[RMDB]
RNA sequence: GGGAACGACUCGAGUAGAGUCGAAAAAAGCCCUUCCCUGCUCCCUCUCUCACAUCCCUUGCAUGGUGGAGGGUGAGCUUUCUGAAAACCCCUCCCACAUGCAGGGUUUGCAGGAUGGCGAGCCUCAGAACGAGAUACGUUUCGACGUAUCUCGUUCAAAAGAAACAACAACAACAAC
Reactivity to 2A3 in 0.01 (KOAc 150mM, MgCl2 10mM, bicine 150mM(pH8.5), 24C), signal-to-noise 3, nucleotides 027 to 126: a000a010g090c010c000c010u020u010c000c000c000u000g000c000u020c030c000c000u030c010u030c000u010c000a030c000a070u090c030c000c010u040u060g000c000a000u000g000g000u000g020g000a000g000g000g010u050g010a050g020c000u040u110u080c100u180g080a040a040a010a010c010c000c000c020u000c000c000c000a010c000a020u010g000c000a010g010g000g000u020u000u020g020c040a030g020g020a070u170g000g030c100g000a010g000c000c010u050c040a050
Reactivity to DMS in 0.01 (KOAc 150mM, MgCl2 10mM, bicine 150mM(pH8.5), 24C), signal-to-noise 2, nucleotides 027 to 126: a080a110g040c060c000c000u000u010c020c000c000u020g000c020u000c010c000c000u000c050u010c040u080c100a260c000a000u000c110c020c000u000u030g030c070a000u000g010g000u040g000g020a020g000g000g020u110g000a050g000c060u010u030u090c220u080g030a150a080a040a170c090c020c000c030u000c020c000c020a000c000a000u030g000c000a040g010g000g010u060u000u000g020c300a090g000g010a050u040g000g010c240g010a010g000c030c140u040c190a120